Annotation: Conditions: 150 mM KOAc, 10 mM MgCl2 and 150 mM bicine (pH 8.5), 24 C. Structure probing data (2A3 and DMS) for a 177-nucleotide construct. For DMS, 5,537 sequencing reads were counted. 2A3 adducts were read by reverse transcription with SuperScript II with manganese.
RNA sequence: GGGAACGACUCGAGUAGAGUCGAAAAGGGGCGAACCGACGGGAGUUCAAUGGUAAAGAGGCGAAGAACCUCGGAGGUUCCCUCCCAAGAAGGUUCAAGAGAAUACAAGAAAUGGAGGAAUUUCCCCGAUAACAUUUAAGUUCGCUUAAAUGUUAUCAAAAGAAACAACAACAACAAC
Reactivity to 2A3 in 0.01 (KOAc 150mM, MgCl2 10mM, bicine 150mM(pH8.5), 24C), signal-to-noise 5, nucleotides 027 to 126: g020g000g000g000c060g000a000a000c010c000g010a010c010g010g010g010a240g020u010u020c020a040a070u100g040g000u090a130a140a050g120a060g090g060c050g030a080a030g020a050a060c000c000u000c000g000g000a000g000g000u010u000c020c000c000u020c010c000c000a020a020g040a010a010g030g000u050u070c040a080a010g040a020g020a130a040u120a160c070a110a030g050a070a130a020u080g020g010a040g020g050a040a060u020u030u020c000c000c000c000
Reactivity to DMS in 0.01 (KOAc 150mM, MgCl2 10mM, bicine 150mM(pH8.5), 24C), signal-to-noise 6, nucleotides 027 to 126: g010g020g010g030c180g030a030a020c010c010g020a210c070g000g000g000a100g020u000u000c030a100a110u010g010g010u010a060a110a130g010a110g000g010c030g000a120a200g000a040a030c000c000u000c010g000g010a200g010g000u000u000c020c030c010u000c000c000c030a090a060g000a140a070g000g000u000u000c030a080a100g010a100g000a070a060u010a070c070a050a110g000a070a080a080u000g010g000a070g000g000a100a110u000u010u000c000c000c020c300